The record gives the reactivity of an RNA of 207 nucleotides to DMS and 2A3. The reactions ran in a buffer of 150 mM KOAc, 10 mM MgCl2 and 150 mM bicine (pH 8.5), at 24 C. For DMS, 2,488 sequencing reads were counted.
RNA sequence: GGGAACGACUCGAGUAGAGUCGAAAAGCGUACUACUCGCAGCUUAGCGAGGUACUGCUUCUAUCCCAAAUAGGAUAGAAGGAGUACUACCCACCGCUAAGAACUACUGCGAGUAUCGCAAAAGGAUGUCUGUCUUGUUCGCAAGACAGACAUCCAAUCAUUCAGUUUGGUUCGCCAAACUGAAUGAAAAAGAAACAACAACAACAAC
Reactivity to DMS in 0.01 (KOAc 150mM, MgCl2 10mM, bicine 150mM(pH8.5), 24C), signal-to-noise 1, nucleotides 027 to 156: g040c000g040u030a060c140u000a000c000u010c000g060c000a030g010c010u000u000a010g010c030g010a100g050g000u000a000c000u000g030c020u020u000c010u010a000u010c000c010c020a070a190a180u010a110g000g020a030u000a000g000a020a000g020g000a070g000u000a020c000u000a020c020c020c020a300c090c010g000c000u000a020a030g000a070a160c000u000a290c020u010g000c010g020a000g010u010a000u000c030g020c020a060a030a090a210g000g010a030u000g010u000c020u000g030u010c010u000u010g040u000u010c300g110c010a020a010g000a010c000a010g000a000c010a000u000c000c000a000a100
Reactivity to 2A3 in 0.01 (KOAc 150mM, MgCl2 10mM, bicine 150mM(pH8.5), 24C), signal-to-noise 4, nucleotides 027 to 156: g020c000g030u110a050c020u000a000c000u030c000g010c010a000g010c010u000u000a000g000c000g000a010g010g000u000a010c000u020g300c000u010u000c000u000a000u010c010c010c000a220a300a130u210a100g030g000a010u000a000g000a000a000g040g090a000g010u000a010c010u030a050c020c080c010a100c020c010g000c000u000a030a020g010a050a030c160u300a020c000u220g030c000g040a010g000u000a010u040c010g000c020a080a080a020a010g010g000a000u000g000u010c000u000g000u010c000u030u030g030u070u110c280g050c120a000a000g000a000c000a000g000a000c000a000u000c000c000a000a000